Chemical mapping of a 177-nucleotide RNA with DMS and 2A3. Values cover nucleotides 27 to 126.
[RMDB]
RNA sequence: GGGAACGACUCGAGUAGAGUCGAAAAGAUAUGGAAAUGUCUGCGUUAACAUUAGCUAGGAAACGUGAGUGUCGGAAACGACACUCUUCCUUGGACCUAAUGUUAACGCAGAGCAUUUCCUAAGUCACUCAGAUAUUCACUUCGGUGAAUAUCUGAGAAAAGAAACAACAACAACAAC
Reactivity to DMS in 0.01 (KOAc 150mM, MgCl2 10mM, bicine 150mM(pH8.5), 24C), signal-to-noise 2, nucleotides 027 to 126: g000a070u010a300u000g010g010a030a010a000u000g000u000c000u030g000c010g000u000u000a010a000c000a010u000u010a010g000c030u000a010g000g010a010a080a190c300g030u000g010a000g020u010g020u000c000g020g010a100a120a300c010g030a010c000a000c000u000c000u000u010c000c000u000u010g030g020a190c300c000u010a000a010u000g000u000u000a000a010c000g000c000a000g000a010g000c000a010u000u000u000c000c000u010a010a070g030u000c030a300
Reactivity to 2A3 in 0.01 (KOAc 150mM, MgCl2 10mM, bicine 150mM(pH8.5), 24C), signal-to-noise 1, nucleotides 027 to 126: g000a010u070a020u220g000g000a000a020a000u020g010u010c000u000g020c000g000u000u000a000a000c000a010u000u000a000g000c010u020a010g020g090a100a190a100c300g300u260g140a010g000u000g000u010c000g010g060a060a110a060c000g000a000c020a010c000u000c040u000u040c000c010u030u090g100g100a110c020c000u020a010a000u010g010u000u000a000a000c000g000c000a010g010a000g000c000a000u000u000u020c000c000u000a010a000g030u000c020a070
The reactions ran in a buffer of 150 mM KOAc, 10 mM MgCl2 and 150 mM bicine (pH 8.5), at 24 C.